Source: RMDB library M2PK90, as collected in RNAgym.
The record gives the reactivity of an RNA of 177 nucleotides to 2A3 and DMS.
RNA sequence: GGGAACGACUCGAGUAGAGUCGAAAAAUUAACCCAGCCUAAAUGAAGAGCAGGACAAAAGGUUCGUCUGCAAACACUCCAUGGUAGACAGUGGAUGGGGAAAUGGAUGUGGACUAUUUGGAAGUAAAUCCACUCUUAAGUUCGCUUAAGAGUGGAUAAAAGAAACAACAACAACAAC
Reactivity to 2A3 in 0.01 (KOAc 150mM, MgCl2 10mM, bicine 150mM(pH8.5), 24C), signal-to-noise 3, nucleotides 027 to 126: a000u060u060a040a060c010c000c000a010g030c010c030u110a160a120a110u150g070a100a070g010a010g050c040a020g030g050a050c030a040a190a050a010g110g010u080u080c050g000u010c040u010g010c000a020a060a020c040a010c020u000c020c010a020u060g100g020u070a070g040a140c050a020g080u060g130g060a050u040g000g000g020g050a000a120a020u080g030g000a000u040g020u040g010g000a010c020u050a110u150u130u060g060g040a060a020g030u090a050a130
Reactivity to DMS in 0.01 (KOAc 150mM, MgCl2 10mM, bicine 150mM(pH8.5), 24C), signal-to-noise 5, nucleotides 027 to 126: a100u010u010a140a130c010c010c010a160g010c050c040u010a050a080a060u010g010a090a070g010a130g010c030a050g000g000a060c080a070a060a070a120g000g010u010u000c090g020u000c010u010g000c040a050a040a110c060a040c050u000c010c030a020u000g010g010u000a070g000a070c080a050g030u010g000g000a060u000g000g000g000g010a050a080a060u000g020g010a070u000g030u000g010g010a060c080u000a070u000u000u000g000g000a090a080g000u010a050a080